Source: RMDB library M2PK90, as collected in RNAgym. The record gives the reactivity of an RNA of 177 nucleotides to 2A3 and DMS. DMS adducts were read by reverse transcription with MarathonRT.
RNA sequence: GGGAACGACUCGAGUAGAGUCGAAAAUAAAAGGAGGAUGAGAAAUAUAGAGAGAUAUCGGUACUCCCACGCGCGUCUCUCAUUGAUAAGAGUGAUAAAAGGGUGAUAAUGUUAUAGCGCGCAAAAACGCAAAACAUAGAUUCGUCUAUGUUUUGCGAAAAGAAACAACAACAACAAC
Reactivity to 2A3 in 0.01 (KOAc 150mM, MgCl2 10mM, bicine 150mM(pH8.5), 24C), signal-to-noise 2, nucleotides 027 to 126: u130a030a050a010a020g040g000a040g040g000a020u040g000a030g080a040a080a000u230a030u140a090g040a010g010a000g010a040u010a020u110c000g010g000u020a020c020u020c000c020c010a040c030g030c010g010c000g020u010c010u000c010u000c020a020u010u110g010a010u030a110a090g000a020g030u080g030a020u100a080a070a030a020g040g030g000u070g040a070u080a180a020u040g040u050u090a090u110a080g050c010g000c000g000c060a100a020a000a000a000
Reactivity to DMS in 0.01 (KOAc 150mM, MgCl2 10mM, bicine 150mM(pH8.5), 24C), signal-to-noise 3, nucleotides 027 to 126: u010a050a080a130a090g010g020a050g010g010a090u010g000a050g000a050a070a100u010a160u020a150g010a040g010a040g000a070u000a050u010c030g000g000u010a130c130u000c010c030c030a150c130g010c020g000c170g010u000c010u000c010u000c010a090u010u020g000a070u000a060a050g010a030g000u010g000a070u000a040a040a040a080g010g010g000u010g000a070u010a040a040u000g000u000u000a080u010a080g010c030g040c080g010c130a020a040a030a040a080

For 2A3, 1,919 sequencing reads were counted.